An RNA of 177 nucleotides, treated with 2A3 and DMS and read out base by base.
For DMS the reverse transcriptase was MarathonRT.
RNA sequence: GGGAACGACUCGAGUAGAGUCGAAAAGAUAUGGACCUACCCAGCUUUUGACGGCUGGUCGGAAACGACCAACCGAUAAGCUGGUAGGUCCUAAGUCAAAAUCCCAUGGGCUUCGGCCCAUGGGAAACCAUGCUUAUAAGUUCGCUUAUAAGCAUGGAAAAGAAACAACAACAACAAC
Reactivity to 2A3 in 0.01 (KOAc 150mM, MgCl2 10mM, bicine 150mM(pH8.5), 24C), signal-to-noise 5, nucleotides 027 to 126: g000a000u010a000u040g000g010a000c000c010u020a030c160c150c040a010g020c030u210u260u300u300g090a020c010g010g000c000u000g000g000u000c000g000g000a010a010a000c000g000a000c010c010a020a010c000c010g130a140u120a300a070g000c010u010g020g000u000a000g000g000u010c000c000u000a000a000g010u000c000a020a000a010a250u030c020c000c000a000u000g000g010g000c050u110u130c300g140g000c000c000c000a000u010g000g010g000a000a000a000
Reactivity to DMS in 0.01 (KOAc 150mM, MgCl2 10mM, bicine 150mM(pH8.5), 24C), signal-to-noise 4, nucleotides 027 to 126: g010a010u000a150u010g000g010a010c000c010u000a000c230c110c120a010g010c000u000u000u000u010g010a240c030g010g000c020u000g010g010u000c010g020g000a030a030a050c010g010a010c000c010a000a010c000c000g010a060u000a010a030g020c000u000g000g000u000a000g000g000u000c000c000u000a000a060g010u000c010a110a090a120a130u000c000c000c000a020u000g010g010g020c000u000u010c200g030g010c000c000c000a000u000g000g010g000a000a010a070